Source: RMDB library RFMREP, as collected in RNAgym.
This 177-nucleotide RNA was probed chemically with DMS and 2A3.
[RMDB]
RNA sequence: GGGAACGACUCGAGUAGAGUCGAAAACCCGGGCUCUGUCCUAGUGGCGAACGGGAGCUUAGGGCAUUGCCCGGUGAUGUACAGUCCCUUUCCACAACGUUGGAGAUGAAGCUGGGCUUUCGAGUCUUACUUCUUUUUCGUUCGCGAAAAAGAAGUAAAAAGAAACAACAACAACAAC
Reactivity to DMS in 0.01 (KOAc 150mM, MgCl2 10mM, bicine 150mM(pH8.5), 24C), signal-to-noise 1, nucleotides 027 to 126: c180c000c000g020g000g000c000u000c030u000g030u010c010c000u010a020g060u030g020g020c000g010a110a090c120g010g000g010a240g010c030u020u000a030g020g000g010c000a010u020u000g020c000c000c020g020g010u010g010a050u000g020u010a200c170a140g000u000c000c020c070u000u000u000c010c010a040c090a120a130c220g000u010u010g000g020a040g020a050u010g020a070a130g010c050u000g000g000g000c010u000u000u000c030g030a040g000u020c030u000
Reactivity to 2A3 in 0.01 (KOAc 150mM, MgCl2 10mM, bicine 150mM(pH8.5), 24C), signal-to-noise 1, nucleotides 027 to 126: c000c000c000g000g000g020c010u000c010u010g000u000c000c020u020a050g210u130g170g010c030g020a180a090c080g110g100g070a060g050c000u040u060a010g010g000g050c000a000u000u020g000c000c020c000g000g000u050g010a100u150g060u070a040c020a020g040u010c000c000c000u000u040u000c100c010a130c090a250a050c180g070u140u040g010g020a050g000a020u050g080a060a050g050c070u070g000g090g040c040u190u070u090c140g040a010g040u000c000u020
Reactivities are given for positions 27 through 126. For 2A3 the reverse transcriptase was SuperScript II with manganese. The reactions ran in a buffer of 150 mM KOAc, 10 mM MgCl2 and 150 mM bicine (pH 8.5), at 24 C.